The record gives the reactivity of an RNA of 207 nucleotides to 2A3. The reactions ran in a buffer of 150 mM KOAc, 10 mM MgCl2 and 150 mM bicine (pH 8.5), at 24 C. 2A3 adducts were read by reverse transcription with SuperScript II with manganese.

RNA sequence: GGGAACGACUCGAGUAGAGUCGAAAAACAUCUCACUGGGAAGUGAGAUGUGAGUCUACAUGGGAAUGUAGACGGUCGAACUUAAACAAGGGCGAGGUUUAAGGAGGAGAACGAGAUGAACGGGAGUUGAUCGAGUUCUACUCGAAUUAUCGCAAGCGUGUACACGUGUAUUCGUACACGUGUGCACAAAAGAAACAACAACAACAAC
Reactivity to 2A3 in 0.01 (KOAc 150mM, MgCl2 10mM, bicine 150mM(pH8.5), 24C), signal-to-noise 2, nucleotides 027 to 156: a000c010a000u010c000u010c000a000c000u030g060g060g070a080a030g010u000g010a000g000a010u000g000u010g000a020g000u000c000u020a010c010a000u020g080g000g120a150a020u010g000u000a000g000a000c000g010g010u070c040g070a070a060c010u000u020a000a000a000c030a030a030g090g030g020c010g000a010g010g000u010u010u000a020a010g030g010a010g010g010a020g010a020a010c010g000a010g000a030u030g020a020a000c030g040g080g030a160g010u000u010g050a010u010c010g000a000g000u000u000c000u010a020c000u000c000g000a000a040u300u200a170u170c020g000c050a040a050g170c020